[RMDB]
RNA sequence: GGGAACGACUCGAGUAGAGUCGAAAAGGGGUCUGAUCGGGAGGCUGUUACAGCUUUUGACGCUCUGAAGCCUCCACGGAGCGAUAAGCUGUUCAGCCGAAGAACGAUCAGACGGAGGCACCCAAAAUACACUGCUCAGUUCGCUGAGCAGUGUAAAGGGAAGGAGUAAGUUCGCUUACUCCUUCCCAAAAGAAACAACAACAACAAC
Reactivity to 2A3 in 0.01 (KOAc 150mM, MgCl2 10mM, bicine 150mM(pH8.5), 24C), signal-to-noise 1, nucleotides 027 to 156: g090g000g020g000u000c000u000g000a000u000c000g000g030g000a010g000g000c000u040g040u130u070a030c000a020g000c000u140u180u180u300g140a030c020g010c000u000c010u030g020a080a040g000c000c000u000c000c000a000c010g000g000a000g010c020g070a090u080a300a020g000c000u000g000u000u010c010a000g000c000c000g000a020a020g000a010a000c020g000a000u000c000a000g000a000c020g000g000a000g000g020c010a030c010c000c010a130a040a000a000u080a010c000a000c030u040g010c010u000c000a000g050u070u090c060g150c130u000g000a000g000c000a000g000u000g000u010a000a000a010